The record gives the reactivity of an RNA of 177 nucleotides to 2A3 and DMS.
For DMS, 6,940 sequencing reads were counted.
For DMS the reverse transcriptase was MarathonRT.
2A3 adducts were read by reverse transcription with SuperScript II with manganese.
[RMDB]
RNA sequence: GGGAACGACUCGAGUAGAGUCGAAAAGAAAGGCAGCCACUGCAGCCCACGGAGCCAGUCGAGGCAUGCUUUUGCAUGCCGCCCACGACUGAGGGCAGCUGCGGCACUGAGGGCAGCUGCCGAAAGAACCUAUGACUGAUUUCGAUCAGUCAUAGGUAAAAGAAACAACAACAACAAC
Reactivity to 2A3 in 0.01 (KOAc 150mM, MgCl2 10mM, bicine 150mM(pH8.5), 24C), signal-to-noise 5, nucleotides 027 to 126: g060a020a100a010g060g000c020a010g020c030c040a120c080u130g030c030a020g020c000c010c010a010c040g090g010a030g060c020c020a010g010u040c020g060a060g000g000c000a010u010g000c000u190u300u210u300g000c010a010u000g000c000c000g000c000c020c000a120c020g110a030c050u080g060a150g040g050g000c010a000g000c010u050g010c000g050g010c030a030c140u130g050a160g010g060g000c020a000g000c000u020g000c000c000g000a010a010a000g020a010
Reactivity to DMS in 0.01 (KOAc 150mM, MgCl2 10mM, bicine 150mM(pH8.5), 24C), signal-to-noise 5, nucleotides 027 to 126: g010a100a110a120g010g010c030a040g010c030c100a110c090u000g010c080a100g000c080c020c030a120c130g000g000a150g030c040c010a020g000u000c030g020a210g000g010c010a000u000g000c000u010u000u010u020g010c010a000u000g000c000c010g000c090c040c100a300c050g010a040c070u010g010a120g010g010g010c000a080g000c020u000g000c040g020g010c070a090c140u010g010a070g020g000g020c040a050g000c010u000g010c000c010g000a030a070a100g010a140